[RMDB]
RNA sequence: GGGAACGACUCGAGUAGAGUCGAAAAGUAUGGAUGCCACCGUGACGGCUCAAUCACACAAGUGCCAGCGAUAACGAGGCGCUCGCUAUUGCUGCGUAACUGACGGCCUGACGGUCUGACGUUACAAAAAACGAAAAGUGGUUCGCCACUUUUCGAAGUAGUUAGGUAUCUUCGGAUACCUAACUACAAAAGAAACAACAACAACAAC
Reactivity to 2A3 in 0.01 (KOAc 150mM, MgCl2 10mM, bicine 150mM(pH8.5), 24C), signal-to-noise 6, nucleotides 027 to 156: g090u050a060u200g040g030a040u060g060c050c030a020c020c020g030u040g070a090c120g010g010c030u050c110a110a150u160c060a060c020a030c010a140a030g020u040g050c010c000a000g000c000g010a010u010a030a010c020g010a020g300g140c180g100c150u010c000g000c010u020a020u010u040g000c020u020g010c050g060u020a060a040c010u020g020a000c050g010g010c000c010u060g080a030c060g020g000u010c010u010g020a010c010g030u040u080a040c060a010a100a010a020a020a010c020g000a000a000a000a000g000u000g040g000u040u080c160g040c060c000a000c000u000u000u000u000c000g000a040a020
Reactivity to DMS in 0.01 (KOAc 150mM, MgCl2 10mM, bicine 150mM(pH8.5), 24C), signal-to-noise 2, nucleotides 027 to 156: g050u000a060u000g010g010a060u000g000c000c040a080c040c010g020u010g000a200c140g010g070c000u000c060a110a080u000c080a070c030a120c100a120a080g070u000g000c000c010a050g010c030g030a070u000a040a040c020g020a120g020g010c120g020c060u000c010g070c020u000a020u000u000g000c010u010g000c050g010u010a020a030c000u000g000a300c280g020g050c010c000u020g040a080c190g030g000u000c030u000g040a160c140g000u000u000a050c070a000a020a050a050a100a170c010g020a030a000a020a010g000u010g010g010u000u010c300g040c000c000a010c000u000u000u000u000c000g000a040a050

Overview:
Structure probing data (2A3 and DMS) for a 207-nucleotide construct. DMS adducts were read by reverse transcription with MarathonRT. Conditions: 150 mM KOAc, 10 mM MgCl2 and 150 mM bicine (pH 8.5), 24 C. It was measured as part of the RMDB library M2RFPK.